Structure probing data (2A3 and DMS) for a 177-nucleotide construct. The data come from the RNA Mapping Database (RMDB), library OK2TRN. Conditions: 150 mM KOAc, 10 mM MgCl2 and 150 mM bicine (pH 8.5), 24 C.
[RMDB]
RNA sequence: GGGAACGACUCGAGUAGAGUCGAAAAUGAUGGAUGGCGAUGAGCAAGUGGAAUACCCAUUGAAACCAGUUAUUGAAAAUGCAAAGCCGACUUUUCGCCAAAUUAUGCACCACUUCUCCGACGCGGCCUGAUCUUUCCAGUUCGCUGGAAAGAUCAGAAAAGAAACAACAACAACAAC
Reactivity to 2A3 in 0.01 (KOAc 150mM, MgCl2 10mM, bicine 150mM(pH8.5), 24C), signal-to-noise 1, nucleotides 027 to 126: u200g040a020u040g000g090a060u070g080g000c030g030a060u090g040a080g000c040a110a030g080u050g110g040a100a020u090a220c040c010c000a010u040u110g050a230a060a010c040c000a010g080u020u040a160u150u100g080a080a010a080a040u070g000c020a130a060a000g000c000c010g030a040c030u070u010u020u020c020g020c020c070a000a060a060u230u080a070u090g070c020a000c060c000a020c000u050u000c020u010c040c030g010a070c040g000c000g000g020c000
Reactivity to DMS in 0.01 (KOAc 150mM, MgCl2 10mM, bicine 150mM(pH8.5), 24C), signal-to-noise 2, nucleotides 027 to 126: u020g010a110u000g050g050a100u000g020g000c110g000a080u020g010a030g010c080a050a080g040u000g000g000a130a170u000a130c100c090c010a130u000u000g000a070a070a150c000c030a160g000u010u000a060u000u030g000a080a030a030a040u000g000c060a020a090a110g000c060c030g000a070c060u000u000u000u000c030g000c040c030a060a060a070u020u000a060u000g000c100a100c000c000a100c080u000u000c020u000c000c070g000a090c150g010c090g020g000c070